[RMDB]
Record summary
Conditions: 150 mM KOAc, 10 mM MgCl2 and 150 mM bicine (pH 8.5), 24 C. Structure probing data (2A3) for a 207-nucleotide construct.
RNA sequence: GGGAACGACUCGAGUAGAGUCGAAAACACAUGUUCGCAUGUGACAGGUCCUAAGUCAGCACCGUUUGACGAUCUAGGGAGCUGGGUGUCGGAAACGACACUCAGCGAAGAACUAGAUCCGAGGUGCUGAUAUGGAAAAGAGGUAUUUCGAUACCAAGGUUGUAUGGCACUUCGGUGCCAUACAACCAAAAGAAACAACAACAACAAC
Reactivity to 2A3 in 0.01 (KOAc 150mM, MgCl2 10mM, bicine 150mM(pH8.5), 24C), signal-to-noise 1, nucleotides 027 to 156: c020a020c010a050u020g060u090u120c270g120c080a000u000g020u000g110a100c040a060g080g100u000c010c020u080a120a030g030u010c000a000g000c000a000c000c000g070u060u200u120g110a100c060g000a000u000c000u010a010g000g000g050a000g010c000u000g060g010g000u000g010u030c000g020g120a190a080a050c000g030a000c000a000c000u000c000a000g030c050g000a000a000g000a000a000c000u000a010g000a010u000c000c000g040a030g000g010u010g000c000u000g000a000u000a000u030g060g130a030a030a060a030g220a150g000g000u020a010u020u230u180c220g000a000u020a010c050c050a170a140
Reactivities are given for positions 27 through 156. It was measured as part of the RMDB library RNAMAK.